The record gives the reactivity of an RNA of 177 nucleotides to DMS and 2A3. The DMS profile rests on 732 reads. Values cover nucleotides 27 to 126. For DMS the reverse transcriptase was MarathonRT.

[RMDB]
RNA sequence: GGGAACGACUCGAGUAGAGUCGAAAAAUUGCAACGAUGGCCUAUCGGAAGCCCAGCGACCUGGAUGGCUUUAUCCAGCAAAUGCCCAAGGCGGACAUGCGUGUGAAGGUACAGCUCGCCGAGGAUCCCUUACCGACUCUUUCGAGAGUCGGUAAGGAAAAGAAACAACAACAACAAC
Reactivity to DMS in 0.01 (KOAc 150mM, MgCl2 10mM, bicine 150mM(pH8.5), 24C), signal-to-noise 1, nucleotides 027 to 126: a090u000u000g000c060a070a090c200g000a080u000g000g040c020c010u000a180u000c060g020g000a040a250g040c020c080c060a080g030c030g000a120c090c000u010g000g060a080u010g000g010c060u000u010u010a010u020c020c090a180g000c040a010a100a110u000g000c040c020c010a060a240g010g010c060g010g050a030c080a010u000g020c000g000u000g030u000g010a130a100g000g000u020a070c070a050g010c050u020c040g030c010c030g010a160g000g000a100u010c070
Reactivity to 2A3 in 0.01 (KOAc 150mM, MgCl2 10mM, bicine 150mM(pH8.5), 24C), signal-to-noise 1, nucleotides 027 to 126: a000u080u110g020c010a100a040c030g000a000u070g050g030c050c030u100a060u080c040g020g010a040a000g010c050c010c120a020g000c010g060a090c010c000u050g100g000a080u100g060g000c060u030u120u050a040u030c000c010a010g040c010a040a000a150u190g060c050c000c000a000a030g000g050c000g010g010a060c140a150u150g020c140g090u130g000u030g150a220a100g160g050u110a030c010a040g000c010u010c020g000c030c020g040a010g020g010a040u010c000